[RMDB]
RNA sequence: GGGAACGACUCGAGUAGAGUCGAAAAGGUCUGCGCAGUCCGGCAACAUCAGCAGAGAGCCCGCUAUACGUGACGGAUUGGCUGAAGCGUACAGAAAUAUUGAGCCUCCUGCAAGAGGCAGCCAAGCAAAACGUACGUGAGUUCGCUCACGUACGAACAACUAUCACGAGUUCGCUCGUGAUAGUUGAAAAGAAACAACAACAACAAC
Reactivity to DMS in 0.01 (KOAc 150mM, MgCl2 10mM, bicine 150mM(pH8.5), 24C), signal-to-noise 1, nucleotides 027 to 156: g020g030u000c010u020g040c040g050c110a180g010u000c020c040g040g000c050a120a070c040a200u000c010a180g000c030a030g050a080g030a140g010c030c000c000g030c080u000a100u000a040c040g040u000g030a210c040g000g000a240u000u000g010g020c000u000g000a050a300g030c000g090u000a100c000a070g010a100a100a140u010a110u010u000g010a230g010c050c010u000c050c000u000g060c190a130a080g000a070g030g040c010a050g010c010c040a040a140g050c090a050a040a050a150c030g000u000a000c000g020u010g000a010g010u000u000c300g030c020u000c000a020c000g000u000a010c000g010a010a070
Reactivity to 2A3 in 0.01 (KOAc 150mM, MgCl2 10mM, bicine 150mM(pH8.5), 24C), signal-to-noise 4, nucleotides 027 to 156: g040g020u000c000u050g020c020g010c030a060g070u030c060c060g090g010c020a040a050c010a120u150c040a010g000c030a010g040a000g000a020g120c010c030c000g000c020u060a090u030a090c080g020u050g050a000c030g060g020a060u020u090g040g000c000u010g010a060a040g020c010g020u060a030c000a040g170a090a140a020u240a120u140u160g050a020g010c010c020u010c010c030u120g070c070a090a020g000a010g040g000c010a000g000c000c000a020a010g040c050a030a060a030a070c010g000u000a030c000g000u010g000a000g030u040u170c230g030c110u000c000a000c000g000u000a000c000g000a000a010
Structure probing data (DMS and 2A3) for a 207-nucleotide construct.
Reactivities are given for positions 27 through 156.
The DMS profile rests on 1,988 reads.
The reactions ran in a buffer of 150 mM KOAc, 10 mM MgCl2 and 150 mM bicine (pH 8.5), at 24 C.
It was measured as part of the RMDB library M2RFPK.
For 2A3 the reverse transcriptase was SuperScript II with manganese.